This 177-nucleotide RNA was probed chemically with DMS and 2A3. The DMS profile rests on 2,444 reads. High DMS reactivity at an A or C suggests that its Watson-Crick edge is free. For DMS the reverse transcriptase was MarathonRT. It was measured as part of the RMDB library OK2TRN. Reactivities are given for positions 27 through 126. The RNA was probed in 150 mM KOAc, 10 mM MgCl2 and 150 mM bicine (pH 8.5) at 24 C.
[RMDB]
RNA sequence: GGGAACGACUCGAGUAGAGUCGAAAACACAGUGCGGUCGACGAGCGCGCUCACUUGCGCGGCGAUGUCCGCUAUCAUCGCGACACCGGACGGUCUGCGGGUUCCGUGGGCCGUCAAGAUCAGGUUCCUCUCUGGGUACAUUCGUGUACCCAGAGAGAAAAGAAACAACAACAACAAC
Reactivity to DMS in 0.01 (KOAc 150mM, MgCl2 10mM, bicine 150mM(pH8.5), 24C), signal-to-noise 3, nucleotides 027 to 126: c060a070c170a090g030u000g010c050g000g000u000c000g010a090c050g010a110g020c020g020c010g010c020u000c300a100c250u000u000g020c010g000c020g010g000c000g000a120u010g010u000c020c030g010c040u000a050u010c090a010u000c060g010c050g010a080c080a100c030c040g000g010a030c010g030g000u000c010u010g030c010g000g010g010u000u000c020c000g090u000g000g010g000c030c000g010u000c000a020a040g000a120u000c080a150g000g010u000u000c070
Reactivity to 2A3 in 0.01 (KOAc 150mM, MgCl2 10mM, bicine 150mM(pH8.5), 24C), signal-to-noise 2, nucleotides 027 to 126: c130a010c040a040g170u060g080c010g020g040u060c030g060a080c030g020a100g260c010g010c010g020c030u090c080a280c100u180u190g010c010g020c000g000g060c010g010a020u100g020u010c010c000g000c000u030a080u130c100a020u090c030g020c030g080a010c030a040c050c010g060g000a000c000g000g000u000c000u000g020c020g080g030g170u300u160c040c000g010u020g010g000g000c000c000g000u010c000a000a010g000a050u090c030a030g060g020u060u040c010